This 207-nucleotide RNA was probed chemically with 2A3 and DMS.
Conditions: 150 mM KOAc, 10 mM MgCl2 and 150 mM bicine (pH 8.5), 24 C.
The DMS profile rests on 2,505 reads.
The 2A3 profile rests on 1,339 reads.
Source: RMDB library M2RFPK, as collected in RNAgym.
DMS adducts were read by reverse transcription with MarathonRT.
RNA sequence: GGGAACGACUCGAGUAGAGUCGAAAAUGCUGUCGUUGACAGCGCCCAAGGCUUCACAACCUGAAAGAAGCGCCUGUUAUCAGGACGGUUGAUCCAUUUACCGGUGCAGACCUCUGCAAACACCGGGUUUAACAAGCAUCUUUCGAGAUGCUUGUAAGUCUAGAGUGCUAUUCGUAGCACUCUAGACAAAAGAAACAACAACAACAAC
Reactivity to 2A3 in 0.01 (KOAc 150mM, MgCl2 10mM, bicine 150mM(pH8.5), 24C), signal-to-noise 2, nucleotides 027 to 156: u180g000c000u000g000u040c070g300u040u150g010a000c020a000g000c020g010c000c000c000a030a020g160g010c010u010u000c030a010c010a160a020c010c000u020g000a000a020a000g000a000a000g010c020g140c000c000u090g060u270u120a140u300c010a000g010g000a000c010g000g020u000u020g010a080u070c020c010a060u080u090u120a110c000c000g000g000u000g040c020a020g050a190c010c110u140c040u140g060c060a050a080a010c050a000c000c000g040g000g010u030u140u090a010a000c000a010a000g000c000a000u000c000u020u070u020c050g120a010g000a010u000g000c000u010u000g000u010a000a010
Reactivity to DMS in 0.01 (KOAc 150mM, MgCl2 10mM, bicine 150mM(pH8.5), 24C), signal-to-noise 2, nucleotides 027 to 156: u000g000c000u000g000u000c000g030u000u000g020a010c020a020g040c020g060c000c010c010a200a120g000g020c000u020u000c170a090c090a130a140c010c000u000g000a180a100a220g000a110a130g040c080g000c030c000u000g020u000u010a080u000c080a060g020g020a130c110g020g000u000u010g000a190u030c060c070a270u000u000u010a150c030c040g040g060u010g010c020a110g000a200c170c090u050c090u000g000c040a180a150a050c000a010c000c010g000g000g000u000u010u000a150a060c000a020a020g000c000a010u010c000u000u000u010c240g010a000g050a000u000g020c000u000u000g000u000a020a100